[RMDB]
RNA sequence: GGGAACGACUCGAGUAGAGUCGAAAAGAUAUGGACCCACAAUAGGGCAACAGCUCGGAAACGAGACAUGCCUUUGUCGGGUCCUAAGUCAAACACUUACCUGUCUCUUCGGAGACAGGUAAGUGAAUCCAUGGGAUCUGUUCGCAGAUCCCAUGGAAAAAGAAACAACAACAACAAC
Reactivity to DMS in 0.01 (KOAc 150mM, MgCl2 10mM, bicine 150mM(pH8.5), 24C), signal-to-noise 2, nucleotides 027 to 126: g020a010u000a300u000g010g000a030c010c000c030a030c020a020a020u010a020g030g010g000c000a010a110c210a250g040c010u010c000g010g000a070a120a230c000g000a000g010a020c050a140u000g010c000c000u010u000u000g000u000c220g060g000g020u010c000c000u000a010a020g000u010c060a130a120a190c010a010c000u000u000a020c000c000u000g010u000c000u010c000u000u020c200g000g000a010g000a000c000a020g000g010u000a000a000g010u000g000a050a060
Reactivity to 2A3 in 0.01 (KOAc 150mM, MgCl2 10mM, bicine 150mM(pH8.5), 24C), signal-to-noise 1, nucleotides 027 to 126: g010a010u110a050u110g010g030a030c000c090c000a000c000a010a180u270a230g080g050g000c040a070a070c080a280g010c000u000c000g010g000a110a090a060c010g010a000g060a010c040a090u080g050c000c010u000u010u020g060u000c170g000g000g000u000c000c000u010a000a000g030u000c040a090a110a000c010a000c000u010u020a000c010c030u010g000u000c010u000c010u010u110c300g050g000a000g000a000c030a000g000g000u000a000a000g000u000g000a000a000